[RMDB]
RNA sequence: GGGAACGACUCGAGUAGAGUCGAAAAGAGAACAUCAUGCUGGGCCAGCUGGCGCCGCUGGGCACGGGCAGCUUUGGCCUCAUGCUGGACGAGUCCAAGCUGGCAGACGCCAUCGAGCUGGAGUUUGUCAGCGAGGAGGUUUCGACCUCCUCGCUGAAAAAGAAACAACAACAACAAC
Reactivity to DMS in 0.01 (KOAc 150mM, MgCl2 10mM, bicine 150mM(pH8.5), 24C), signal-to-noise 1, nucleotides 027 to 126: g040a150g000a050a140c060a020u000c050a050u000g040c170u020g000g000g020c050c020a020g000c000u000g020g010c070g010c020c000g000c050u000g000g000g020c110a160c090g020g000g030c000a000g010c040u000u000u020g040g000c070c070u000c060a050u000g020c090u000g020g010a050c060g000a150g020u000c010c020a020a200g000c010u020g000g000c070a040g000a090c090g020c000c000a120u000c130g000a100g010c160u010g030g000a070g010u010u010u000g010